[RMDB]
RNA sequence: GGGAACGACUCGAGUAGAGUCGAAAAGGCGUGCAGCACGGCCAUGCGUGCCGAGCAGCCGGUGCCGGUUGGCGAGCGGUCGAGCUUGGCCGGGCGGAUGGCGACGGUGUUCACGCCCGUCAGCACACAGCGAGUAGGGAUUCGUCCCUACUCGCUGAAAAGAAACAACAACAACAAC
Reactivity to 2A3 in 0.01 (KOAc 150mM, MgCl2 10mM, bicine 150mM(pH8.5), 24C), signal-to-noise 2, nucleotides 027 to 126: g020g020c020g000u030g040c070a000g000c000a010c000g010g010c020c010a020u190g110c000g060u150g040c000c000g020a010g010c010a010g000c000c000g000g040u040g000c020c000g200g150u130u300g090g030c050g040a100g100c000g000g020u150c090g060a050g070c020u050u040g050g030c000c020g040g130g010c010g030g060a020u050g000g030c170g130a070c080g250g000u000g000u010u010c000a000c000g020c080c000c010g070u050c020a050g080c050a040c010a010
Reactivity to DMS in 0.01 (KOAc 150mM, MgCl2 10mM, bicine 150mM(pH8.5), 24C), signal-to-noise 2, nucleotides 027 to 126: g000g010c010g010u010g010c190a040g020c020a030c000g010g020c000c000a050u000g000c000g040u000g020c000c010g000a050g020c020a200g000c000c010g000g030u000g020c000c000g030g000u010u000g020g020c040g000a090g050c000g010g030u000c110g000a110g020c000u000u010g020g020c050c300g000g000g000c020g010g000a070u000g000g000c000g000a130c010g000g010u000g000u000u000c040a010c010g010c000c000c010g000u000c060a100g010c090a050c230a200
This 177-nucleotide RNA was probed chemically with 2A3 and DMS. It was measured as part of the RMDB library OK2TST. For DMS the reverse transcriptase was MarathonRT. Values cover nucleotides 27 to 126. For 2A3, 2,168 sequencing reads were counted. For 2A3 the reverse transcriptase was SuperScript II with manganese. The reactions ran in a buffer of 150 mM KOAc, 10 mM MgCl2 and 150 mM bicine (pH 8.5), at 24 C. For DMS, 2,507 sequencing reads were counted.